[RMDB]
RNA sequence: GGGAACGACUCGAGUAGAGUCGAAAAGAGGGUAGCUCUGACUCUGCCCGAUGACACCAACCUGCCCUGUGACCUAUCGGCGACGAUAAGUAGCAGGGUGUUCCGUGUUGGAACCUCCACCCUUUAGCCUACUUUAUAUGUUCGCAUAUAAAGUAGGAAAAGAAACAACAACAACAAC
Reactivity to DMS in 0.01 (KOAc 150mM, MgCl2 10mM, bicine 150mM(pH8.5), 24C), signal-to-noise 9, nucleotides 027 to 126: g010a140g010g010g020u000a050g010c130u010c080u000g010a100c120u010c010u000g010c000c000c000g010a070u010g010a150c300a150c050c040a040a070c050c070u000g010c000c000c000u000g000u010g000a030c080c220u000a010u000c000g010g000c300g000a210c000g010a000u000a010a010g010u000a150g000c010a010g000g010g020u000g000u010u000c090c090g010u010g010u000u010g000g000a050a130c030c020u000c020c030a160c090c070c020u000u000u000a130g020
Reactivity to 2A3 in 0.01 (KOAc 150mM, MgCl2 10mM, bicine 150mM(pH8.5), 24C), signal-to-noise 7, nucleotides 027 to 126: g060a020g040g050g110u160a060g060c030u050c130u210g050a070c030u020c010u040g010c000c000c000g010a040u050g020a010c020a010c060c010a010a020c010c020u060g000c000c000c000u010g020u040g030a060c010c000u010a000u010c000g040g000c040g050a070c010g000a030u010a040a010g010u020a010g000c010a000g000g020g000u000g000u050u020c030c040g050u050g060u190u080g010g020a030a020c000c020u040c020c010a060c030c030c000u050u060u110a050g030

Description: The record gives the reactivity of an RNA of 177 nucleotides to DMS and 2A3. Source: RMDB library RFMREP, as collected in RNAgym. The RNA was probed in 150 mM KOAc, 10 mM MgCl2 and 150 mM bicine (pH 8.5) at 24 C.